Conditions: 150 mM KOAc, 10 mM MgCl2 and 150 mM bicine (pH 8.5), 24 C. An RNA of 177 nucleotides, treated with DMS and 2A3 and read out base by base. DMS adducts were read by reverse transcription with MarathonRT. Source: RMDB libraries RFM100 and RFMREP, as collected in RNAgym. For 2A3 the reverse transcriptase was SuperScript II with manganese.
RNA sequence: GGGAACGACUCGAGUAGAGUCGAAAACGCUCCAUAUCUGCCGAAUGAUGCCAAUGUAUGGUGCCUACUGUCCAACGUAACCGUUAAUCGCUGCCUUGGCGGCGAUUAACAAUCACAGGGCGACACGGUAUAGUUCACUAUUCGUAGUGAACUAUACAAAAGAAACAACAACAACAAC
Reactivity to DMS in 0.01 (KOAc 150mM, MgCl2 10mM, bicine 150mM(pH8.5), 24C), signal-to-noise 9, nucleotides 027 to 126: c180g010c030u010c010c020a030u020a040u010c050u000g010c060c040g010a120a060u020g010a080u010g010c030c090a070a090u010g020u010a040u010g010g010u010g000c030c040u010a080c100u010g010u000c020c020a130a120c160g020u010a070a090c210c150g010u010u000a010a010u000c000g010c000u000g010c000c030u020u030g020g020c010g000g000c000g000a000u000u000a010a000c010a050a050u030c140a050c050a090g000g010g010c040g010a060c100a070c180g000
Reactivity to 2A3 in 0.01 (KOAc 150mM, MgCl2 10mM, bicine 150mM(pH8.5), 24C), signal-to-noise 9, nucleotides 027 to 126: c030g010c010u030c010c000a020u030a050u080c030u050g030c010c020g120a170a140u160g070a090u130g040c030c030a080a040u110g030u060a060u060g050g020u030g020c010c010u070a100c030u060g020u020c010c020a050a030c080g040u050a060a040c060c030g000u000u000a000a000u000c000g000c000u010g000c000c040u100u240g150g000c000g000g000c000g000a000u000u000a000a000c000a000a000u010c010a010c010a040g010g020g020c020g030a010c040a020c080g050